Structure probing data (DMS and 2A3) for a 177-nucleotide construct. DMS adducts were read by reverse transcription with MarathonRT.

[RMDB]
RNA sequence: GGGAACGACUCGAGUAGAGUCGAAAACAACGACGACGACGUUAUUGAUGAUACGAUGGUGAUGAUGCAUUCGAAAAUCAAUAAUGUUCAGCAAAACUUUUCACCAACGCAAACAACUUAUACGGAAUGCUACGUACGGUUUCGACCGUACGUAGCAAAAAGAAACAACAACAACAAC
Reactivity to DMS in 0.01 (KOAc 150mM, MgCl2 10mM, bicine 150mM(pH8.5), 24C), signal-to-noise 1, nucleotides 027 to 126: c090a090a040c030g000a130c000g010a160c120g000a060c000g040u000u070a000u000u000g010a040u000g000a160u000a300c200g000a040u010g000g040u000g040a050u000g000a080u000g020c020a060u000u000c030g000a050a090a190a030u000c010a000a000u000a010a000u000g000u000u020c030a180g000c030a040a030a090a050c150u000u000u000u000c130a090c000c040a000a090c040g000c170a040a090a060c080a010a140c090u000u000a110u000a030c180g000g000a080a130
Reactivity to 2A3 in 0.01 (KOAc 150mM, MgCl2 10mM, bicine 150mM(pH8.5), 24C), signal-to-noise 1, nucleotides 027 to 126: c030a000a050c040g200a010c010g030a020c060g010a000c010g010u000u000a000u050u000g010a000u010g010a040u100a300c050g040a070u020g030g080u150g040a160u100g050a050u180g160c000a020u050u180c010g010a030a000a000a040u040c020a010a010u050a010a010u050g000u080u040c050a010g030c000a000a160a000a050c060u020u020u120u050c050a080c020c010a060a000c070g050c090a030a100a050c010a100a000c090u190u100a070u070a160c000g000g100a050a080